[RMDB]
This 177-nucleotide RNA was probed chemically with DMS and 2A3. The reactions ran in a buffer of 150 mM KOAc, 10 mM MgCl2 and 150 mM bicine (pH 8.5), at 24 C.

RNA sequence: GGGAACGACUCGAGUAGAGUCGAAAAGAUAUGGAACCGUACGCUUUUGACGCUCUGGACCUCGGAAACGAGGUCCAAGGAGCGAUAAGCGUGACGGUUCCUAAGUCAAACGGCCCUUCGGGGCCGAGAAUAAGGCUAACUUCGGUUAGCCUUAUUCAAAAGAAACAACAACAACAAC
Reactivity to DMS in 0.01 (KOAc 150mM, MgCl2 10mM, bicine 150mM(pH8.5), 24C), signal-to-noise 4, nucleotides 027 to 126: g010a050u010a300u000g000g000a000a000c000c000g020u000a020c010g000c000u000u000u000u010g010a230c080g020c000u000c010u000g010g010a010c000c000u000c000g010g000a090a080a190c010g010a000g010g000u000c000c010a010a040g030g000a020g020c000g010a070u000a010a010g010c000g020u000g010a020c010g010g000u000u000c000c000u000a010a120g010u010c030a090a150a300c030g000g010c000c000c010u000u020c220g030g010g010g000c010c010g010a020
Reactivity to 2A3 in 0.01 (KOAc 150mM, MgCl2 10mM, bicine 150mM(pH8.5), 24C), signal-to-noise 2, nucleotides 027 to 126: g010a000u050a020u150g010g000a000a000c010c010g000u010a000c000g030c020u100u130u100u290g300a130c110g000c010u020c020u030g010g000a010c000c000u010c020g020g030a020a060a030c000g000a010g000g000u000c000c010a000a020g040g000a000g000c010g010a020u060a030a010g010c000g000u010g100a000c000g000g000u000u000c000c000u000a010a000g000u000c000a020a000a130c040g000g020c000c000c000u010u030c240g010g010g000g000c000c000g000a000
Background
For DMS the reverse transcriptase was MarathonRT. Values cover nucleotides 27 to 126.